[RMDB]
RNA sequence: GGGAACGACUCGAGUAGAGUCGAAAAGGGAGGUUGGUGGUGGACGAGCCACUCGCCAACCGGGUCAGGUCCGGAAGGAAGCAGCCCUAACGAGCCCGGCACGGGUCAUCGUGCCAGCCUCCCACCUUCUAAACUUCUAGGAGUUCGCUCCUAGAAGCUAUUUCGUAGACUUCGGUCUACGAAAUAGAAAAGAAACAACAACAACAAC
Reactivity to 2A3 in 0.01 (KOAc 150mM, MgCl2 10mM, bicine 150mM(pH8.5), 24C), signal-to-noise 2, nucleotides 027 to 156: g020g010g010a010g020g030u020u020g030g040u130g020g010u010g000g010a010c010g010a010g000c010c020a010c020u000c000g000c020c030a080a090c090c060g000g000g020u110c010a000g000g030u010c000c000g050g140a080a110g010g000a020a000g020c000a000g000c000c000c000u000a010a020c000g000a000g030c110c260c160g000g000c020a030c020g070g000g150u020c010a010u010c020g060u120g050c000c000a000g010c000c020u020c040c010c000a020c010c010u060u080c050u140a120a120a090c000u000u000c000u000a000g000g000a010g030u130u080c160g060c090u010c000c000u000a000g000a000a000g010